[RMDB]
RNA sequence: GGGAACGACUCGAGUAGAGUCGAAAAGUAAAGGCCGAACGAGCGCUAAUGCGCAUGCUAGAAAAUGGUAGGCCAUCGUAGUGUGAGCAUGAGCACGAAAGAAACACACACAUGCAGGUGCAAAAAAGGAAGCUAUAUAGUUCGCUAUAUAGCUUCCAAAAGAAACAACAACAACAAC
Reactivity to DMS in 0.01 (KOAc 150mM, MgCl2 10mM, bicine 150mM(pH8.5), 24C), signal-to-noise 4, nucleotides 027 to 126: g010u000a060a090a140g020g020c010c040g010a110a090c180g020a130g020c030g000c010u000a090a070u000g010c010g000c010a050u010g020c020u010a070g000a080a040a070a050u000g000g020u010a110g010g020c020c020a050u000c100g010u000a050g030u010g010u000g010a030g010c020a040u000g020a120g000c020a050c050g010a090a080a070g000a080a070a080c090a070c060a050c070a040c080a040u000g010c060a060g000g010u000g000c070a000a010a050a040a060a110
Reactivity to 2A3 in 0.01 (KOAc 150mM, MgCl2 10mM, bicine 150mM(pH8.5), 24C), signal-to-noise 3, nucleotides 027 to 126: g010u030a030a110a000g040g000c060c010g050a080a050c040g000a030g040c060g000c070u190a210a020u170g000c010g000c020a020u090g020c020u060a030g150a090a200a050a030u090g060g040u060a060g040g110c020c000a000u030c010g040u040a080g020u030g020u000g040a020g000c020a040u030g050a010g010c010a020c060g040a060a030a040g050a010a080a000c070a000c000a000c000a000c000a030u130g010c040a000g020g100u080g040c030a090a090a000a020a020a010